[RMDB]
RNA sequence: GGGAACGACUCGAGUAGAGUCGAAAACUGUCUCAGUGUUCAUCCCUUGAUCAAGGAUGCCCGAAACGGUGAGGCGGAAAGCAAAUUAAAUAACGUCAACCCAUCGGGACGGUUGGCCAGUUAAGAAAAAACCGGGGAGUCUUCGGACUCCCCGGAACCUUUCUUCUCAGUUCGCUGAGAAGAAAGGAAAAGAAACAACAACAACAAC
Reactivity to 2A3 in 0.01 (KOAc 150mM, MgCl2 10mM, bicine 150mM(pH8.5), 24C), signal-to-noise 1, nucleotides 027 to 156: c010u030g030u010c000u000c020a170g180u000g050u110u010c000a040u020c000c020c000u030u020g130a180u120c010a000a030g000g000a030u020g010c000c000c000g000a010a030a010c010g000g040u010g010a000g020g000c020g110g050a100a020a000g030c060a000a000a160u180u160a090a050a140u180a040a040c030g010u010c010a000a000c010c000c040a040u010c000g000g020g020a000c010g010g050u000u000g020g000c000c020a160g030u080u070a170a120g040a070a110a060a000a030a030c020c020g020g100g000g000a000g020u010c000u040u080c090g120g000a000c000u000c030c000c060c000g000g010a000a000